Notes: Structure probing data (DMS and 2A3) for a 207-nucleotide construct. Reactivities are rounded to 0.1 and cut off at 0 and 3. Values cover nucleotides 27 to 156. The 2A3 profile rests on 1,692 reads.

[RMDB]
RNA sequence: GGGAACGACUCGAGUAGAGUCGAAAAUAGGGCUAGCGUCGAAAUGUAAGUGUAUUGGAGGUAGAGCACUGUUUGGGUGAGGGGUCCGUCUAGGAUUACCAAUCUCAGAUAAACUCCGAAUGCUAAUACACAUGUUCGGCAGUCAGACUGCGAGUGCGAUUAAUUCAGGCUUCGGCCUGAAUUAAUCAAAAGAAACAACAACAACAAC
Reactivity to DMS in 0.01 (KOAc 150mM, MgCl2 10mM, bicine 150mM(pH8.5), 24C), signal-to-noise 2, nucleotides 027 to 156: u000a050g010g020g030c000u000a020g040c090g060u000c000g000a090a110a040u000g020u000a080a190g020u000g020u000a030u000u020g020g000a130g010g000u020a050g000a090g020c010a140c100u010g020u000u000u000g000g010g010u010g010a300g010g010g030g000u000c010c000g010u000c100u000a090g040g010a060u000u000a130c060c030a040a240u000c000u000c000a000g020a030u000a060a100a060c000u000c010c000g020a060a080u030g000c020u020a020a030u000a010c000a030c010a130u000g030u000u010c020g000g040c000a110g010u000c040a030g010a090c020u000g010c040g000a100g000u000g000c220
Reactivity to 2A3 in 0.01 (KOAc 150mM, MgCl2 10mM, bicine 150mM(pH8.5), 24C), signal-to-noise 3, nucleotides 027 to 156: u140a010g010g000g030c020u020a040g010c060g070u040c030g060a020a020a070u130g050u270a150a270g010u020g000u000a010u000u020g010g000a010g020g020u100a010g010a000g020c000a010c040u000g000u020u000u010g010g000g020u010g000a000g030g010g020g010u000c020c000g000u040c100u190a050g000g020a010u010u040a300c000c000a000a020u000c000u000c000a000g020a010u080a080a270a130c000u000c020c000g010a050a010u090g000c010u000a030a020u010a000c010a000c000a010u090g070u070u010c010g010g030c020a020g010u010c010a030g020a120c030u050g050c050g070a020g060u040g030c020